Chemical mapping of a 177-nucleotide RNA with 2A3 and DMS. For 2A3, 672 sequencing reads were counted. DMS adducts were read by reverse transcription with MarathonRT. The reactions ran in a buffer of 150 mM KOAc, 10 mM MgCl2 and 150 mM bicine (pH 8.5), at 24 C. It was measured as part of the RMDB library OK1LIB. 2A3 adducts were read by reverse transcription with SuperScript II with manganese.
RNA sequence: GGGAACGACUCGAGUAGAGUCGAAAAUGGCGGUGAUGGGGAUGUUGACGGGAACUUCCACGGUGACGUGUGCGGGUAUUUCGGGAACAUGGACCCGAUAGCCCGCGCUGAAUAGGCCCUGCUGGUCAAGCUGGGCCGAUUUCGAUCGGCCCAGCUUAAAAGAAACAACAACAACAAC
Reactivity to 2A3 in 0.01 (KOAc 150mM, MgCl2 10mM, bicine 150mM(pH8.5), 24C), signal-to-noise 2, nucleotides 027 to 126: u150g000g000c090g010g050u080g040a100u100g020g000g040g040a040u040g000u080u150g020a060c020g000g000g040a130a000c050u080u000c050c000a010c020g000g070u020g000a040c080g020u080g010u050g030c000g080g010g000u170a300u060u130u000c020g000g000g060a050a050c120a300u130g140g080a090c000c010c000g000a000u000a000g020c020c020c040g000c000g000c020u000g010a040a090u140a200g000g020c010c020c000u020g000c060u020g000g070u100c040
Reactivity to DMS in 0.01 (KOAc 150mM, MgCl2 10mM, bicine 150mM(pH8.5), 24C), signal-to-noise 2, nucleotides 027 to 126: u020g010g010c060g000g000u000g020a030u000g010g000g000g000a100u000g000u040u010g010a090c090g020g000g000a080a110c080u010u020c080c030a050c020g010g000u000g000a140c080g010u010g010u000g020c030g000g000g050u010a100u010u000u000c000g010g000g020a030a100c150a200u040g010g000a060c000c020c010g000a000u000a100g010c020c000c000g010c000g000c010u000g010a050a080u010a150g010g000c020c030c020u010g000c030u020g000g040u030c110